[RMDB]
RNA sequence: GGGAACGACUCGAGUAGAGUCGAAAAUCAGGAAAGCUGCCUGUCUGAGUCAGUCUUUACAGUGUAGGGAGAAUCACAGGGUCUGUUACUAUGCAUUUCAUGAACAAUUGGGCUGAUGCAAAAACAAAUGACUUUCUUAGAAGACAUCCAGAGGGAGGAAGCGCUUAAUUUUCGAAUUAAGCGCUUCAAAAGAAACAACAACAACAAC
Reactivity to 2A3 in 0.01 (KOAc 150mM, MgCl2 10mM, bicine 150mM(pH8.5), 24C), signal-to-noise 1, nucleotides 027 to 156: u070c010a010g020g020a030a090a000g050c040u020g000c010c030u080g040u060c030u040g030a060g040u030c060a090g010u000c070u100u130u030a110c040a060g030u040g040u090a050g000g070g000a050g030a040a090u100c040a040c020a080g030g030g000u000c020u000g000u010u040a100c060u030a060u140g000c000a030u000u050u140c080a070u130g080a140a020c050a090a120u100u090g000g080g000c100u050g030a010u040g010c010a000a000a000a170a070c080a000a110a050u090g020a020c000u110u120u000c000u010u040a040g000a120a000g040a020c000a040u040c000c020a050g000a050g000g050g000a030g000